[RMDB]
Source: RMDB library OK2TRN, as collected in RNAgym. Chemical mapping of a 177-nucleotide RNA with 2A3 and DMS. Reactivities are given for positions 27 through 126.
RNA sequence: GGGAACGACUCGAGUAGAGUCGAAAAUCGGCCGACCGGAUGCCUUGGGCGGCAGCGAGUUCGGCGGCAUGAGCAGUGUCUCGGAACACGAUCGCGCUGGCUCCUUCGGGAGGCAAGGGCGCCAGCCCGCUGAACAAAGAUUCGUCUUUGUUCAGCGAAAAGAAACAACAACAACAAC
Reactivity to 2A3 in 0.01 (KOAc 150mM, MgCl2 10mM, bicine 150mM(pH8.5), 24C), signal-to-noise 5, nucleotides 027 to 126: u050c010g040g000c010c010g130a250c000c010g040g030a050u060g000c000c020u100u100g100g070g020c040g040g010c020a000g090c030g020a080g050u030u030c010g030g010c000g020g000c040a080u130g030a030g090c160a040g060u020g020u040c040u080c160g080g050a080a010c040a010c040g050a070u120c060g000c020g000c060u010g030g000c010u020c000c010u040u050c060g070g000g010a010g020g010c020a020a030g020g000g000c080g000c000c000a010g000c010c020
Reactivity to DMS in 0.01 (KOAc 150mM, MgCl2 10mM, bicine 150mM(pH8.5), 24C), signal-to-noise 9, nucleotides 027 to 126: u010c060g010g010c010c010g000a140c020c010g010g000a060u000g010c040c020u000u000g010g010g010c090g000g010c070a050g010c060g010a120g010u000u000c010g000g010c040g010g010c030a050u010g010a070g010c120a150g010u000g000u000c020u010c100g010g010a100a050c050a080c070g000a100u000c120g010c110g010c000u000g000g000c010u000c010c020u000u000c070g020g010g000a070g000g010c030a120a060g010g000g000c090g000c030c020a040g000c010c080